[RMDB]
RNA sequence: GGGAACGACUCGAGUAGAGUCGAAAAUUUCCGUGGCCGCCAAUGUCUAUGGAUUUGCAGAGACCGGCGGGGAAAUCUACAAUAAUCCCAAGUUCAUGCUGGCAGACUCACCUGCGGCCUCAUUGCAGACGAUAAUGGAUUUCGAUCCAUUAUCGUCAAAAGAAACAACAACAACAAC
Reactivity to DMS in 0.01 (KOAc 150mM, MgCl2 10mM, bicine 150mM(pH8.5), 24C), signal-to-noise 3, nucleotides 027 to 126: u010u000u010c000c010g040u010g050g030c010c030g000c040c100a090a150u010g020u000c050u010a080u010g010g020a230u000u010u010g000c050a040g000a060g000a050c070c270g010g020c040g010g010g000g000a050a050a070u020c060u000a080c180a090a100u020a130a170u000c000c010c010a120a150g000u010u000c090a050u010g020c040u000g030g000c040a030g000a140c090u000c180a120c110c060u000g010c010g010g010c010c060u010c050a060u010u010g020c170a130
Reactivity to 2A3 in 0.01 (KOAc 150mM, MgCl2 10mM, bicine 150mM(pH8.5), 24C), signal-to-noise 2, nucleotides 027 to 126: u000u000u010c000c010g050u070g150g070c000c000g000c000c030a070a100u190g030u000c000u060a070u090g000g110a200u090u140u300g060c020a030g020a000g000a160c040c100g030g000c050g000g010g030g000a000a140a020u010c050u090a090c080a130a120u220a110a070u080c000c000c010a020a020g030u050u090c080a070u200g000c000u040g100g000c000a000g070a160c020u030c080a050c050c020u030g010c010g020g000c050c030u030c030a130u110u280g020c020a040